[RMDB]
RNA sequence: GGGAACGACUCGAGUAGAGUCGAAAAGAGCGUUGGCGUAUAUCGCACUUCUGGCCAUGUCCUCGUUGUGGCUUAUUAGCGAAAUAUCGGUUCCGGUACCGAGUCGGAAUGCUAAUAUAUACGGAAAGGGUAUAUCUUACUUCGGUAGGAUAUACCCAAAAGAAACAACAACAACAAC
Reactivity to DMS in 0.01 (KOAc 150mM, MgCl2 10mM, bicine 150mM(pH8.5), 24C), signal-to-noise 7, nucleotides 027 to 126: g000a080g010c090g010u010u010g000g010c040g010u010a050u020a050u030c060g010c050a120c060u010u010c050u010g000g020c020c020a090u010g010u010c010c020u010c130g010u010u000g010u000g000g000c090u010u000a020u010u000a010g010c020g020a080a080a100u030a070u010c020g000g010u000u010c050c080g000g000u020a080c010c030g000a020g000u010c140g000g000a090a090u030g010c020u000a020a030u010a030u010a070u040a060c050g000g000a130a090a110
Reactivity to 2A3 in 0.01 (KOAc 150mM, MgCl2 10mM, bicine 150mM(pH8.5), 24C), signal-to-noise 9, nucleotides 027 to 126: g080a010g020c060g010u030u030g030g000c020g030u040a050u030a020u180c060g030c040a070c050u080u020c040u060g040g000c010c010a060u080g050u090c020c030u040c050g060u030u080g040u020g030g020c010u060u050a040u030u070a060g020c030g070a050a060a060u210a050u050c020g020g000u050u050c050c030g030g010u040a050c010c030g010a010g030u040c030g030g040a080a030u140g000c000u000a020a010u040a020u020a010u020a080c050g030g030a080a060a060
Source: RMDB library OK1LIB, as collected in RNAgym. Structure probing data (DMS and 2A3) for a 177-nucleotide construct. Values cover nucleotides 27 to 126. The 2A3 profile rests on 11,608 reads. DMS (dimethyl sulfate) methylates the pairing face of unpaired adenines and cytosines.